[RMDB]
RNA sequence: GGGAACGACUCGAGUAGAGUCGAAAAACGGACGGGCACAUUUUACGCAGGCUUGAGGCGGGAGCUUUCACAGAAAAAGAUGUGUUUCUAUUGGAUGAAUUUCAUGAACUAGGUGCUGCUAAGCUCGGUCAGAGUCACGUUUCGACGUGACUCUGACAAAAGAAACAACAACAACAAC
Reactivity to DMS in 0.01 (KOAc 150mM, MgCl2 10mM, bicine 150mM(pH8.5), 24C), signal-to-noise 1, nucleotides 027 to 126: a080c080g030g000a050c080g020g020g000c040a110c130a030u010u050u010u000a090c150g030c100a070g010g030c030u000u020g000a070g000g030c000g000g010g000a050g000c040u000u000u010c040a070c030a110g000a090a090a020a110a040g010a100u060g000u010g010u010u000u000c000u000a150u010u030g020g010a040u000g040a010a060u020u000u010c030a080u020g010a100a040c040u010a050g000g030u020g000c020u000g000c040u000a070a080g000c070u000c060g020
This 177-nucleotide RNA was probed chemically with DMS. The reactions ran in a buffer of 150 mM KOAc, 10 mM MgCl2 and 150 mM bicine (pH 8.5), at 24 C. DMS adducts were read by reverse transcription with MarathonRT. Values cover nucleotides 27 to 126.